[RMDB]
RNA sequence: GGGAACGACUCGAGUAGAGUCGAAAAGCAGGGUCCGCGUUCCAUUCUUUCUUACCUUGUGGCCGGCAUGGUCCCAGCCUCCUCGCUGGCGCCGGCUGGGCAACAUUCCGAGGGGACCGUCCCCUCGCCUUAAAGCUAGGUUCGCCUAGCUUUAAGGAAAAGAAACAACAACAACAAC
Reactivity to 2A3 in 0.01 (KOAc 150mM, MgCl2 10mM, bicine 150mM(pH8.5), 24C), signal-to-noise 2, nucleotides 027 to 126: g010c010a020g060g030g010u040c030c030g040c040g040u070u000c010c020a060u060u030c000u040u100u020c020u090u120a150c040c010u040u030g030u080g060g060c000c000g020g010c040a090u140g010g010u050c000c010c030a000g000c000c000u130c000c020u070c050g010c020u020g010g020c040g010c050c000g030g020c000u000g010g000g020c010a080a020c010a070u160u060c040c030g000a000g000g010g040g020a040c040c010g240u220c000c000c000c020u010c000g010
Reactivity to DMS in 0.01 (KOAc 150mM, MgCl2 10mM, bicine 150mM(pH8.5), 24C), signal-to-noise 3, nucleotides 027 to 126: g010c090a050g010g010g000u000c030c020g030c060g000u000u010c020c030a090u000u000c060u000u000u000c050u000u000a120c070c030u000u010g030u010g010g020c020c010g010g000c020a100u010g030g000u010c300c000c000a010g000c000c080u010c100c080u010c140g020c020u000g000g000c230g010c020c010g010g000c020u010g010g010g030c030a020a030c070a100u000u000c150c040g010a020g000g010g000g010a180c180c220g010u010c010c000c000c000u000c020g000